[RMDB]
RNA sequence: GGGAACGACUCGAGUAGAGUCGAAAACUCUGACGCUUCGGCGUCAGAGAAACCUCUAAGCAGAUUGGCGAGGACGACGCUGCGGAGCGCGUUAGCCAACAAAAACGCAUAGAUUCGUCUAUGCGAAACCCUUUUAAGGAUUCGUCCUUAAAAGGGUAAAAGAAACAACAACAACAAC
Reactivity to 2A3 in 0.01 (KOAc 150mM, MgCl2 10mM, bicine 150mM(pH8.5), 24C), signal-to-noise 8, nucleotides 027 to 126: c000u000c000u010g000a000c000g020c010u040u060c200g130g000c000g000u000c000a000g000a000g010a000a000a000c020c010u050c080u150a100a140g070c080a060g100a300u030u030g010g010c020g030a110g220g090a020c010g040a080c000g010c010u150g100c110g190g150a030g000c020g000c000g010u000u030a030g010c000c010a010a010c030a010a080a020a010a010c010g000c010a000u000a000g010a010u020u030c050g040u000c070u000a010u010g010c000g000a060a010
Reactivity to DMS in 0.01 (KOAc 150mM, MgCl2 10mM, bicine 150mM(pH8.5), 24C), signal-to-noise 6, nucleotides 027 to 126: c000u000c000u000g000a010c010g030c000u000u010c210g030g010c000g020u000c010a010g010a000g010a030a070a100c030c010u010c190u010a100a120g020c160a110g000a160u000u000g010g000c010g020a150g010g000a030c010g020a080c010g010c010u010g020c300g000g010a040g010c010g010c010g010u000u000a210g000c000c000a020a010c070a050a040a060a090a150c010g010c000a010u000a000g010a030u000u010c170g000u000c000u000a000u000g000c000g000a010a070